[RMDB]
RNA sequence: GGGAACGACUCGAGUAGAGUCGAAAACCGCCCGGCACCACCGGUCAAACCAUGGCGUAGGGCGAAUAACCGCAUCGCGGUUAUCCGCCGGCUGUGCAGGGCAGCGGCCCUUGCCCGGAUUUUGGGCAAUGAUGUGUAAGUUCGCUUACACAUCAUUAAAAGAAACAACAACAACAAC
Reactivity to DMS in 0.01 (KOAc 150mM, MgCl2 10mM, bicine 150mM(pH8.5), 24C), signal-to-noise 9, nucleotides 027 to 126: c020c030g010c020c010c020g000g020c060a040c080c140a090c040c030g010g010u000c080a060a110a170c240c080a080u010g010g010c030g010u040a100g010g000g010c010g000a030a000u000a000a010c000c000g010c010a110u030c230g010c000g010g000u000u000a000u000c010c000g000c000c010g000g010c060u000g010u000g010c090a060g000g010g020c020a090g010c100g000g000c010c000c020u010u010g010c030c000c010g000g010a150u010u010u030u010g010g000g000c020
Reactivity to 2A3 in 0.01 (KOAc 150mM, MgCl2 10mM, bicine 150mM(pH8.5), 24C), signal-to-noise 9, nucleotides 027 to 126: c010c000g010c000c010c000g030g010c040a040c040c000a020c000c010g010g000u040c020a070a080a040c060c020a100u110g050g000c060g100u130a160g120g040g000c000g000a000a010u000a000a000c000c000g000c090a200u180c270g000c000g000g000u000u000a000u010c010c000g000c000c010g020g000c010u010g000u020g010c020a050g000g020g000c020a030g090c070g170g040c000c000c000u030u050g000c000c000c000g030g040a170u140u140u140u220g030g000g000c010